The data come from the RNA Mapping Database (RMDB), library OK3TST. Structure probing data (DMS and 2A3) for a 207-nucleotide construct.
RNA sequence: GGGAACGACUCGAGUAGAGUCGAAAACCUCAUGGUUUAUUAGAGUGCAAUUCCGUGAGAACAACUGCCUGUGAUCCUCUGUAUCCCCAGUGGCCAACUCAGGAGCUCAGUAUGCCCUACCCAGUAGAUGCUCAGAACAUCAUUGCUGAGUGAGGAAAUAUUUAAAAUGAUUCGUCAUUUUAAAUAUAAAAGAAACAACAACAACAAC
Reactivity to DMS in 0.01 (KOAc 150mM, MgCl2 10mM, bicine 150mM(pH8.5), 24C), signal-to-noise 3, nucleotides 027 to 156: c070c030u000c050a040u000g040g020u000u000u000a080u020u000a140g020a140g030u000g020c040a110a110u000u010c030c020g050u010g020a090g030a140a090c040a060a070c020u010g030c030c030u010g030u000g010a100u000c030c020u010c020u000g000u000a110u000c020c020c020c030a070g030u000g000g010c070c020a060a090c040u000c040a060g020g010a090g020c030u000c030a080g020u000a060u000g000c000c000c020u000a080c010c010c010a050g020u000a090g010a050u000g010c000u000c300a220g000a090a040c020a020u010c010a110u000u010g010c000u000g010a040g010u000g010a050g020g000a070a120
Reactivity to 2A3 in 0.01 (KOAc 150mM, MgCl2 10mM, bicine 150mM(pH8.5), 24C), signal-to-noise 4, nucleotides 027 to 156: c000c000u000c010a040u050g020g030u070u070u090a120u110u140a140g050a080g080u130g050c060a050a040u060u000c020c010g000u020g030a030g050a040a030c040a030a040c040u080g060c020c000u040g030u040g040a090u050c000c000u010c040u030g030u120a130u050c010c010c010c000a010g010u020g020g020c030c030a050a060c070u020c050a030g010g030a010g020c010u000c050a040g040u050a060u190g040c010c000c000u020a040c010c010c010a020g010u050a010g010a030u050g000c010u020c070a020g050a090a040c020a050u120c020a070u060u220g010c000u000g010a040g020u030g020a030g040g000a060a120

The RNA was probed in 150 mM KOAc, 10 mM MgCl2 and 150 mM bicine (pH 8.5) at 24 C. For 2A3 the reverse transcriptase was SuperScript II with manganese.